[RMDB]
Chemical mapping of a 177-nucleotide RNA with 2A3 and DMS. DMS adducts were read by reverse transcription with MarathonRT. Conditions: 150 mM KOAc, 10 mM MgCl2 and 150 mM bicine (pH 8.5), 24 C. As a SHAPE reagent, 2A3 marks flexible, mostly unpaired nucleotides at the ribose 2'-OH. The data come from the RNA Mapping Database (RMDB), library OK2TST.
RNA sequence: GGGAACGACUCGAGUAGAGUCGAAAAGUGCACAUCCACGACGACGGUAGCGCCGCCCUUGAGCGCCGCGAGCGCCUGUGCAAGUACGCCGGCAAGCAACGUCGCUUGCUUCACCGGACCGAUGCCGUACUGCCUAGAGGUUCGCCUCUAGGCAGUAAAAAGAAACAACAACAACAAC
Reactivity to 2A3 in 0.01 (KOAc 150mM, MgCl2 10mM, bicine 150mM(pH8.5), 24C), signal-to-noise 2, nucleotides 027 to 126: g050u020g020c030a030c010a150u040c070c010a070c050g050a020c030g010a010c030g030g050u060a090g060c020g060c040c000g060c030c020c000u110u200g140a160g010c020g040c010c030g060c030g030a060g060c020g030c040c030u050g020u080g020c010a000a100g110u050a020c060g010c020c000g010g050c010a010a010g010c000a030a130c040g290u200c140g020c140u000u000g010c060u010u050c050a070c040c010g000g010a020c020c050g030a040u110g010c000c000g010
Reactivity to DMS in 0.01 (KOAc 150mM, MgCl2 10mM, bicine 150mM(pH8.5), 24C), signal-to-noise 3, nucleotides 027 to 126: g010u010g030c030a030c030a090u000c060c040a080c070g020a090c060g020a050c030g000g010u000a100g020c030g050c100c030g000c030c020c110u000u000g000a120g000c010g000c110c020g020c070g010a100g020c040g010c010c020u010g040u000g030c050a010a090g020u000a100c120g020c020c040g000g010c300a040a020g010c010a070a040c110g020u010c170g010c120u000u000g020c010u000u000c120a080c050c010g000g020a070c080c080g000a110u010g010c040c070g020